The record gives the reactivity of an RNA of 207 nucleotides to 2A3 and DMS. The reactions ran in a buffer of 150 mM KOAc, 10 mM MgCl2 and 150 mM bicine (pH 8.5), at 24 C. The data come from the RNA Mapping Database (RMDB), library OK3TST. Values are in units of 0.01, from 0 to 300, in steps of 10.
[RMDB]
RNA sequence: GGGAACGACUCGAGUAGAGUCGAAAAUUCAUGAUGAUCAACAAUGCUUGAUUUUAGAACAGCUUCUUAGAAUUCAAGCUUGAAUUGUCUCUGACUCCUGGGAGCUGUCCUGAUGGUUAUUUGUGGCAAGCAUCAAGUAAUGAUCAUUAUCAUUGUCGUAUCGAAUUGAGUUCGCUCAAUUCGAUACAAAAGAAACAACAACAACAAC
Reactivity to 2A3 in 0.01 (KOAc 150mM, MgCl2 10mM, bicine 150mM(pH8.5), 24C), signal-to-noise 5, nucleotides 027 to 156: u150u110c040a010u020g020a000u010g000a000u010c010a010a070c010a060a040u030g010c000u030u000g040a160u150u100u090u180a010g020a050a000c000a020g020c010u080u000c020u110u210a020g010a080a060u090u040c020a020a070g000c000u060u100g110a150a110u180u110g040u040c010u000c020u070g010a030c010u020c020c020u010g000g010g020a010g000c010u000g010u020c010c000u050g040a080u050g080g140u190u160a210u150u210u170g140u100g130g040c010a010a010g020c000a000u040c050a110a050g030u060a130a110u050g000a000u000c010a000u020u040a020u030c070a030u030u270g110u130c080
Reactivity to DMS in 0.01 (KOAc 150mM, MgCl2 10mM, bicine 150mM(pH8.5), 24C), signal-to-noise 1, nucleotides 027 to 156: u020u000c060a250u010g020a020u000g000a000u000c030a040a140c020a100a060u010g000c010u000u000g000a100u000u000u000u000a050g010a000a060c070a110g010c080u000u000c010u000u000a040g010a020a040u000u000c050a040a040g020c030u010u000g000a110a220u000u000g000u030c030u080c130u000g030a030c190u000c020c010u020g000g010g040a020g020c010u000g020u010c010c040u000g020a070u000g020g030u020u010a100u000u000u000g030u000g030g020c050a060a090g020c040a070u000c020a070a180g030u000a100a160u000g000a020u000c020a010u010u000a070u010c050a060u000u000g000u000c090